[RMDB]
RNA sequence: GGGAACGACUCGAGUAGAGUCGAAAAUCAGGGCAGGGAGGUGGAUGCGCAAGGCCGCCUGAUCCAGCGGAAUGACACUAGAGUAGCUGCGCCAACCUUGAAGCUCAAUGAGAGGGUGGAGGCAAAGCCUGUAAAAGAACUUCGGUUCUUUUACAGGAAAAGAAACAACAACAACAAC
Reactivity to DMS in 0.01 (KOAc 150mM, MgCl2 10mM, bicine 150mM(pH8.5), 24C), signal-to-noise 8, nucleotides 027 to 126: u010c070a080g010g010g020c060a070g010g000g010a050g010g020u000g000g020a080u010g020c060g000c060a090a100g010g010c020c020g000c030c030u000g000a060u010c050c080a270g010c030g000g000a090a080u010g020a090c100a070c090u000a080g010a090g010u010a080g020c060u000g000c090g000c010c050a140a050c040c020u010u000g000a220a100g020c070u010c110a060a100u010g010a150g000a080g000g000g010u000g000g000a090g010g010c080a060a080a100g010
Reactivity to 2A3 in 0.01 (KOAc 150mM, MgCl2 10mM, bicine 150mM(pH8.5), 24C), signal-to-noise 4, nucleotides 027 to 126: u070c000a030g000g020g000c020a020g020g020g040a030g010g020u050g030g050a110u130g040c030g010c060a050a040g060g020c000c010g020c010c000u080g030a090u030c030c010a000g010c010g000g040a070a110u170g060a050c030a030c150u110a060g010a030g160u110a010g010c040u050g000c010g010c020c000a040a060c020c000u030u030g050a060a010g020c030u030c080a030a110u100g010a050g010a030g020g030g020u080g020g030a060g020g000c010a030a060a000g040